[RMDB]
RNA sequence: GGGAACGACUCGAGUAGAGUCGAAAAUUAUAGAGUGCAAUAUAUGUAUUUGUAGACGAGGAGGAUAGUGAUCGAAUAGAUCGGCGGAUGCUAUCCCGGAUGUGGCUCAUUCGUUAGCUUAUUAAGUGAACUAUGACGGAUUCGUCCGUCAUAGUUCAAAAGAAACAACAACAACAAC
Reactivity to DMS in 0.01 (KOAc 150mM, MgCl2 10mM, bicine 150mM(pH8.5), 24C), signal-to-noise 1, nucleotides 027 to 126: u030u010a050u030a030g000a020g000u000g000c090a150a100u050a030u080a060u040g110u000a010u000u080u000g000u040a090g010a040c070g000a070g000g010a140g000g000a020u010a080g000u000g000a010u000c000g050a090a060u040a080g000a020u000c010g010g020c000g020g020a060u000g000c040u000a040u000c030c020c000g000g000a030u000g000u000g000g020c090u000c080a130u080u030c050g030u000u000a120g030c010u010u000a120u000u010a210a070g000u050
Reactivity to 2A3 in 0.01 (KOAc 150mM, MgCl2 10mM, bicine 150mM(pH8.5), 24C), signal-to-noise 2, nucleotides 027 to 126: u090u080a130u050a110g210a000g090u010g020c060a010a040u000a010u000a030u110g140u070a040u150u010u000g030u030a070g000a060c030g000a050g060g000a020g040g000a030u060a000g090u070g150a000u030c000g030a020a080u080a260g020a000u050c000g000g000c010g060g030a030u080g000c010u030a000u120c000c030c040g040g000a020u050g060u040g010g010c040u020c060a050u060u030c030g010u020u030a010g020c010u080u060a080u120u120a170a090g100u040